[RMDB]
RNA sequence: GGGAACGACUCGAGUAGAGUCGAAAAAGAGCAAACGCUGACCUUCUUGAGGUCUGGCUUCAAGCACUGUUUUGGUGUUGUGGCUGAUACUCUUGGGCAGUGUUUUGCACCUCUGAGAGUGGAGUAAGCUAAGCAUUCAGUUCGCUGAAUGCUUAGCAAAAGAAACAACAACAACAAC
Reactivity to DMS in 0.01 (KOAc 150mM, MgCl2 10mM, bicine 150mM(pH8.5), 24C), signal-to-noise 2, nucleotides 027 to 126: a070g030a110g020c000a000a010a010c040g000c010u000g010a160c020c000u040u050c150u000u000g000a010g000g000u000c050u010g040g000c000u000u000c040a140a040g020c010a010c000u000g000u010u030u010u060g010g010u000g010u000u020g010u010g000g000c050u000g000a070u000a080c000u000c000u010u010g000g020g020c000a040g000u000g000u000u000u000u000g030c010a170c110c020u020c050u040g010a160g000a150g000u000g000g000a090g010u000a100a170
Reactivity to 2A3 in 0.01 (KOAc 150mM, MgCl2 10mM, bicine 150mM(pH8.5), 24C), signal-to-noise 8, nucleotides 027 to 126: a000g120a000g000c000a000a000a000c010g020c010u030g220a300c010c000u200u200c030u050u080g000a000g030g000u010c050u060g070g000c000u010u000c030a060a050g070c010a000c020u080g220u300u180u200u300g010g000u020g000u020u020g020u000g010g000c000u000g010a000u070a300c000u000c000u020u020g040g010g000c010a010g010u010g010u000u000u010u050g000c010a040c000c010u020c040u050g180a220g010a020g120u160g050g010a040g050u070a100a010